[RMDB]
RNA sequence: GGGAACGACUCGAGUAGAGUCGAAAAGAGGUGAUUGAACGGCUGGCCACGUUCAUCAUCGGCUACAGGGGCUGAAUCCCCUGGGUUGUCACCAGAAGCGUUCGCAGUCGGGCGUUUCGCAAGUGGUUUCAGGACAGCUAUUCGUAGCUGUCCUGAAAAAAGAAACAACAACAACAAC
Reactivity to DMS in 0.01 (KOAc 150mM, MgCl2 10mM, bicine 150mM(pH8.5), 24C), signal-to-noise 1, nucleotides 027 to 126: g000a180g020g070u000g000a000u010u040g000a000a000c000g010g000c040u010g000g040c050c040a070c000g000u000u000c000a010u000c020a010u010c020g020g020c040u050a140c000a000g040g010g000g000c180u050g000a260a070u050c030c000c050c020u000g010g020g000u040u000g000u000c050a050c070c030a300g000a040a000g000c000g000u000u020c000g010c300a080g000u010c010g030g000g000c030g030u000u000u000c030g030c190a090a290g000u030g030g010u000
Reactivity to 2A3 in 0.01 (KOAc 150mM, MgCl2 10mM, bicine 150mM(pH8.5), 24C), signal-to-noise 2, nucleotides 027 to 126: g070a030g000g000u010g010a010u060u140g030a040a000c030g030g000c010u010g150g000c070c020a060c010g000u000u000c000a010u000c010a000u000c000g110g000c010u190a140c000a000g030g030g010g020c030u220g140a050a210u250c000c000c000c020u000g000g000g020u080u010g120u020c010a000c020c000a000g020a000a000g000c040g010u020u030c090g040c140a260g050u160c030g000g090g000c000g000u020u000u000c030g030c050a120a040g060u050g070g000u000